[RMDB]
RNA sequence: GGGAACGACUCGAGUAGAGUCGAAAAUCACUCCAGGGCCCCAGGUGGAGAUGGCCCAGAAUGGUUCAAGCCGCAUCUUAACCUUGCGAGGCUGCCAACUGGGGGAUGCAGGGACCGUGACUUUGCGAACAGCCGGAAUGUUCGCAUUCCGGCUGUUAAAAGAAACAACAACAACAAC
Reactivity to DMS in 0.01 (KOAc 150mM, MgCl2 10mM, bicine 150mM(pH8.5), 24C), signal-to-noise 1, nucleotides 027 to 126: u000c000a110c020u000c000c030a100g000g010g050c000c030c030c000a000g000g040u000g000g000a070g020a090u010g000g000c020c010c030a140g000a140a070u010g000g010u000u020c160a050a070g030c100c200g020c210a060u020c030u000u000a030a090c050c050u000u000g030c210g010a170g040g000c020u010g000c000c000a030a090c020u010g010g000g010g000g070a080u000g000c040a040g020g020g020a100c050c120g010u010g000a090c100u000u000u010g020c060g000
Structure probing data (DMS) for a 177-nucleotide construct. The RNA was probed in 150 mM KOAc, 10 mM MgCl2 and 150 mM bicine (pH 8.5) at 24 C. The DMS profile rests on 863 reads.